[RMDB]
The data come from the RNA Mapping Database (RMDB), library OK2TRN.
The record gives the reactivity of an RNA of 177 nucleotides to DMS and 2A3.
For 2A3, 9,447 sequencing reads were counted.
Values cover nucleotides 27 to 126.

RNA sequence: GGGAACGACUCGAGUAGAGUCGAAAAGGCAGGAGUUGGGCCCCCAGGCCUGGCAGCUCCACCCCUGUGGCUGUGCCGGGUUCAGCCAGUGCUUCAGUUCUUCCAGGCGGGAGUUGCACACUGGCAACUCCAAGAAGUGGUUCGCCACUUCUUGGAGAAAAGAAACAACAACAACAAC
Reactivity to DMS in 0.01 (KOAc 150mM, MgCl2 10mM, bicine 150mM(pH8.5), 24C), signal-to-noise 9, nucleotides 027 to 126: g010g000c050a050g000g010a070g020u000u000g000g000g010c020c020c030c070c090a180g000g010c010c010u000g000g010c030a050g000c030u010c030c020a100c020c130c120c180u010g020u000g000g010c080u000g010u000g010c020c020g000g000g000u000u000c100a120g010c010c010a030g010u010g010c110u000u010c040a050g000u010u000c020u000u000c050c020a170g020g030c170g010g000g000a030g010u000u000g010c300a300c040a060c040u000g020g000c020a100a140
Reactivity to 2A3 in 0.01 (KOAc 150mM, MgCl2 10mM, bicine 150mM(pH8.5), 24C), signal-to-noise 4, nucleotides 027 to 126: g060g000c040a010g020g100a050g050u070u050g010g030g000c000c020c010c000c010a010g060g000c000c000u000g010g000c010a080g140c010u020c000c010a050c020c100c000c100u160g020u040g030g000c110u020g020u030g070c020c020g000g010g000u080u140c040a010g000c000c000a010g000u020g010c070u040u070c020a070g040u080u050c000u080u040c030c010a110g180g020c110g040g030g000a010g000u020u040g030c040a020c000a000c020u000g000g000c010a010a040